[RMDB]
RNA sequence: GGGAACGACUCGAGUAGAGUCGAAAAGUGCAGCGAGAGCUUGACGCGGCUAUCCAAUCGGCCGUGGACAGCCAGCGUGAGAACCAUGGCAGGAGUUGGGCGGACAUUGCCCGGGCGACCGGCACCACGGAGUGUCUAGAUUCGUCUAGACACUCCGAAAAGAAACAACAACAACAAC
Reactivity to DMS in 0.01 (KOAc 150mM, MgCl2 10mM, bicine 150mM(pH8.5), 24C), signal-to-noise 2, nucleotides 027 to 126: g010u000g030c060a150g000c010g010a170g020a170g020c010u000u000g020a160c020g000c000g000g030c020u010a060u000c100c120a090a070u000c140g000g000c010c010g000u010g000g000a160c150a070g010c030c060a090g020c030g060u000g000a120g000a080a080c050c050a070u000g000g000c050a040g020g000a080g010u010u000g010g020g010c030g000g000a090c140a110u010u010g000c030c020c080g000g000g000c070g000a100c040c020g000g010c110a070c100c080a130
Reactivity to 2A3 in 0.01 (KOAc 150mM, MgCl2 10mM, bicine 150mM(pH8.5), 24C), signal-to-noise 1, nucleotides 027 to 126: g000u050g050c040a020g000c060g110a180g000a050g050c010u040u010g030a010c010g020c030g000g010c020u020a070u140c110c010a080a090u110c070g020g040c000c010g000u030g000g010a030c020a000g030c040c040a040g000c000g040u090g030a090g010a060a020c020c020a060u080g000g000c050a040g040g060a090g050u140u110g000g020g030c010g030g030a040c060a200u120u080g020c000c060c000g000g010g020c020g020a040c030c000g000g020c020a060c020c010a070
The record gives the reactivity of an RNA of 177 nucleotides to DMS and 2A3. Values cover nucleotides 27 to 126. The DMS profile rests on 1,745 reads. For DMS the reverse transcriptase was MarathonRT. For 2A3, 1,110 sequencing reads were counted.